[RMDB]
RNA sequence: GGGAACGACUCGAGUAGAGUCGAAAAGAUAUGGACGACGGUAGGGCAACAGCACACGGGCUCGGAAACGAGCUUGUGACAUGCCUUUCCGUCGUCCUAAGUCAAACGCCAGAGUUCGCUCUGGCGACACAAUAGGGACGUUCGCGUCCCUAUUGUGAAAAGAAACAACAACAACAAC
Reactivity to DMS in 0.01 (KOAc 150mM, MgCl2 10mM, bicine 150mM(pH8.5), 24C), signal-to-noise 5, nucleotides 027 to 126: g000a070u010a300u000g010g010a010c010g030a030c010g010g010u020a020g010g010g030c000a030a130c230a170g000c200a090c010a030c070g010g000g000c000u000c000g010g000a110a070a230c010g010a020g010c000u000u000g000u010g000a120c030a130u000g010c000c010u000u000u000c000c000g010u000c000g000u000c000c010u000a000a070g000u010c040a080a070a270c020g020c000c000a010g000a010g020u000u010c240g010c010u000c000u000g000g000c000g000a050
Reactivity to 2A3 in 0.01 (KOAc 150mM, MgCl2 10mM, bicine 150mM(pH8.5), 24C), signal-to-noise 3, nucleotides 027 to 126: g030a010u060a030u190g000g010a000c000g000a010c010g020g000u030a010g000g010g020c020a120a110c050a300g150c140a030c000a030c200g010g020g010c000u000c020g000g000a070a080a020c010g000a000g000c040u000u010g000u010g010a020c000a020u050g010c000c000u010u000u010c000c000g010u000c000g000u020c000c000u000a000a000g000u000c000a000a000a020c020g000c000c000a000g010a000g020u120u240c300g040c160u000c010u000g010g000c000g010a010
Overview: The record gives the reactivity of an RNA of 177 nucleotides to DMS and 2A3. The RNA was probed in 150 mM KOAc, 10 mM MgCl2 and 150 mM bicine (pH 8.5) at 24 C. Source: RMDB library TTRDES, as collected in RNAgym. For 2A3 the reverse transcriptase was SuperScript II with manganese. For DMS, 6,006 sequencing reads were counted.